[RMDB]
RNA sequence: GGGAACGACUCGAGUAGAGUCGAAAAUGACCCUAUCAGGGAUCUUGUGGUUGCUCCGUUCAUAAAAUUGCGUUCUGAUUAUCAGAAUCAACGAGUUGGUGAUGAGCUUCUUUCUUGGGACUUUCACCGAUUCGAAUAGGUUCGCCUAUUCGAAUCGAAAAGAAACAACAACAACAAC
Reactivity to DMS in 0.01 (KOAc 150mM, MgCl2 10mM, bicine 150mM(pH8.5), 24C), signal-to-noise 3, nucleotides 027 to 126: u040g000a120c000c000c000u010a100u020c080a100g010g000g020a010u000c010u020u020g020u010g000g000u030u030g010c060u030c050c120g010u010u000c090a090u030a070a050a080a090u000u010g000c200g010u000u000c020u010g010a190u050u040a130u030c070a050g010a050a030u040c030a020a130c110g010a060g030u000u010g020g010u010g000a030u010g010a010g000c070u010u000c050u010u010u030c130u010u000g020g000g000a200c060u000u000u000c060a080c050
Reactivity to 2A3 in 0.01 (KOAc 150mM, MgCl2 10mM, bicine 150mM(pH8.5), 24C), signal-to-noise 5, nucleotides 027 to 126: u150g120a080c010c000c010u070a170u130c110a070g060g000g080a060u020c030u080u210g080u100g010g010u030u020g010c000u000c030c010g030u100u080c070a060u140a090a180a080a080u020u070g040c050g010u000u000c010u050g050a140u050u140a090u300c010a010g030a040a010u040c020a020a020c020g040a030g100u060u050g030g040u030g020a070u050g000a020g000c000u030u030c000u100u140u000c020u030u060g060g010g040a050c010u030u060u000c070a050c020